This 177-nucleotide RNA was probed chemically with 2A3 and DMS. The data come from the RNA Mapping Database (RMDB), library OK1LIB.

RNA sequence: GGGAACGACUCGAGUAGAGUCGAAAAGGCGGACUACGAACCUAAGAAGUAGAGGAAAAAGAGCCGAAUCCUAGGGCUCCUAGGGUGACGCAUCGUCCGAUGCGGUGGAAAAACACUAACGCCGAAAGGCAUUUGUAUUCUUCGGAAUACAAAUGCCAAAAGAAACAACAACAACAAC
Reactivity to 2A3 in 0.01 (KOAc 150mM, MgCl2 10mM, bicine 150mM(pH8.5), 24C), signal-to-noise 6, nucleotides 027 to 126: g040g020c010g010g030a040c020u080a050c130g110a140a130c020c070u180a160a070g060a170a000g060u080a020g040a060g040g060a060a060a010a030a040g030a020g010c000c010g010a000a010u010c000c000u010a010g030g060g060c070u100c090c010u010a000g010g000g010u020g020a000c000g000c030a110u020c010g100u030c060c050g000a010u050g020c020g000g010u060g040g060a150a120a030a020a010c020a010c040u050a090a010c020g020c010c000g020a050a010a020
Reactivity to DMS in 0.01 (KOAc 150mM, MgCl2 10mM, bicine 150mM(pH8.5), 24C), signal-to-noise 5, nucleotides 027 to 126: g000g010c000g000g000a100c080u010a070c110g030a050a120c090c070u000a120a050g010a090a140g000u010a050g020a280g010g000a030a080a060a140a130g000a050g010c000c010g020a170a060u010c010c020u000a030g000g010g010c130u020c040c000u010a000g000g000g000u000g000a300c300g000c000a000u010c010g010u020c060c030g000a120u020g000c010g010g010u020g020g010a040a060a090a110a050c070a050c110u000a040a160c000g000c010c020g010a050a090a140